RNA sequence: GGGAACGACUCGAGUAGAGUCGAAAAUUAUUGAGCGUAGAUGUCUCUGUCACGAUUCGAGUAAGUGACUCUCGUGUACUACUGGCGAAUGAGACAGAGACAUUAUAUGCUCGUGCCAGUCAAUAAAUUCACUACUUUAGUUCGCUAAAGUAGUGAAAAAAGAAACAACAACAACAAC
Reactivity to 2A3 in 0.01 (KOAc 150mM, MgCl2 10mM, bicine 150mM(pH8.5), 24C), signal-to-noise 3, nucleotides 027 to 126: u150u100a060u070u190g000a010g000c000g000u000a010g000a030u010g010u010c000u000c010u030g010u000c010a000c170g140a020u040u000c000g000a000g020u210a250a090g000u060g070a030c000u010c020u000c100g190u200g020u080a020c010u010a000c010u030g270g010c010g010a010a010u040g010a060g000a070c000a000g000a000g000a010c000a000u000u000a000u010a000u010g000c000u000c000g000u010g000c000c030a080g090u170c070a110a180u100a200a110a100
Reactivity to DMS in 0.01 (KOAc 150mM, MgCl2 10mM, bicine 150mM(pH8.5), 24C), signal-to-noise 7, nucleotides 027 to 126: u010u010a070u010u010g000a010g020c000g050u000a020g000a020u000g000u000c000u000c000u000g010u000c000a110c110g000a140u000u000c010g000a030g010u010a010a030g000u010g000a020c010u000c260u010c240g010u010g010u000a020c010u000a020c010u000g000g010c010g010a010a010u000g010a130g000a020c000a000g010a010g000a000c000a000u000u000a040u000a020u000g010c000u000c010g010u000g000c040c020a180g000u010c150a060a110u010a050a070a130